Chemical mapping of a 177-nucleotide RNA with 2A3 and DMS. For DMS, 2,978 sequencing reads were counted. 2A3 adducts were read by reverse transcription with SuperScript II with manganese. Conditions: 150 mM KOAc, 10 mM MgCl2 and 150 mM bicine (pH 8.5), 24 C.
RNA sequence: GGGAACGACUCGAGUAGAGUCGAAAAAGACAUACGUUCGCGUAUGUCUGACGGGCACCUGACCCUAAGGAAAUGCUCUAUGACAGGACAGACUGAUUGUGAUACCUCGAGAUUUCGAUCUCGAGAACUUUUGCUCUGAUUUCGAUCAGAGCAAAAGAAAAGAAACAACAACAACAAC
Reactivity to 2A3 in 0.01 (KOAc 150mM, MgCl2 10mM, bicine 150mM(pH8.5), 24C), signal-to-noise 2, nucleotides 027 to 126: a000g020a000c000a010u000a010c000g030u010u060c240g000c020g130u010a000u000g000u000c000u010g010a000c030g010g000g000c020a050c070c000u060g110a160c000c020c000u060a090a000g100g070a070a180a100u150g010c010u060c030u080a140u180g080a060c010a000g010g000a050c050a030g050a110c040u120g080a210u160u190g090u060g120a060u110a150c000c010u030c010g000a010g000a020u000u080u140c180g080a020u020c000u000c010g000a020g000a010a000
Reactivity to DMS in 0.01 (KOAc 150mM, MgCl2 10mM, bicine 150mM(pH8.5), 24C), signal-to-noise 3, nucleotides 027 to 126: a000g010a010c000a000u000a000c000g020u010u000c130g040c020g010u000a000u000g010u000c000u000g010a080c150g000g000g020c030a080c040c040u000g000a160c010c020c010u000a080a060g000g000a070a130a050u000g020c010u000c010u010a100u020g010a130c120a040g010g000a040c100a110g010a130c060u010g010a120u000u010g000u010g010a130u000a080c200c000u010c010g000a020g010a020u000u010u000c180g000a020u000c000u000c010g000a010g000a040a060
The data come from the RNA Mapping Database (RMDB), library M2PK50.